[RMDB]
RNA sequence: GGGAACGACUCGAGUAGAGUCGAAAAAGAAUUCUUAUGUACACUGUAAGGAACUGGUGCAUCUUGCCCACUCAAACUCGUCUCACCUUACGACAGUCUAUCGAGCUUGGAGAGUUUAGACUAAGAGUACAGUUACGCGUUUCGACGCGUAACUGUAAAAAGAAACAACAACAACAAC
Reactivity to 2A3 in 0.01 (KOAc 150mM, MgCl2 10mM, bicine 150mM(pH8.5), 24C), signal-to-noise 3, nucleotides 027 to 126: a010g130a070a100u100u080c010u110u150a070u090g020u050a020c140a060c120u050g040u080a070a080g060g080a080a040c050u070g000g010u030g060c000a060u050c060u020u150g060c000c000c000a090c020u080c020a060a070a060c030u000c000g090u030c020u040c120a060c010c000u040u010a050c060g000a000c020a000g030u000c000u010a070u090c120g010a030g000c030u010u140g030g010a130g000a010g130u050u000u100a030g000a110c060u130a070a020g040a030g090
Reactivity to DMS in 0.01 (KOAc 150mM, MgCl2 10mM, bicine 150mM(pH8.5), 24C), signal-to-noise 1, nucleotides 027 to 126: a080g020a060a170u100u010c000u000u020a060u000g050u090a110c090a170c140u000g000u040a060a040g010g030a150a100c080u000g000g000u030g050c050a100u010c160u020u000g020c000c000c000a020c160u030c060a000a050a160c060u000c000g090u000c030u000c040a090c020c010u000u000a080c070g010a100c130a030g000u010c000u000a040u030c100g000a000g000c030u000u060g000g010a060g000a040g000u000u000u000a060g020a060c020u040a090a140g020a190g000